[RMDB]
RNA sequence: GGGAACGACUCGAGUAGAGUCGAAAAGUGUAGCGUCACUUUGAUGGCGGUACUAUGAAUUGAUGCAAGGUGUGGAGCGACCUUAAACAGUUCUGGUGGUGCUUUGAAUGGAGUGCUCUACUGAGAUUUAACUUAUGCACGUUCGCGUGCAUAAGAACUCUCACAACCAGUUCGCUGGUUGUGAGAGAAAAGAAACAACAACAACAAC
Reactivity to 2A3 in 0.01 (KOAc 150mM, MgCl2 10mM, bicine 150mM(pH8.5), 24C), signal-to-noise 5, nucleotides 027 to 156: g090u070g010u040a040g080c020g020u030c000a010c060u170u100u250g230a280u080g030g000c000g020g050u000a010c020u020a050u100g050a060a070u100u080g050a060u090g070c080a040a020g010g000u020g040u080g030g010a010g020c010g010a030c000c010u080u090a100a070a010c020a020g000u020u010c010u030g010g020u040g010g040u020g000c010u020u000u070g050a040a040u070g040g010a030g020u050g000c010u010c010u050a060c040u120g050a040g070a230u070u130u200a050a010c000u000u000a000u000g000c000a010c000g010u020u030c140g010c000g060u000g000c000a000u000a000a000g000a000a000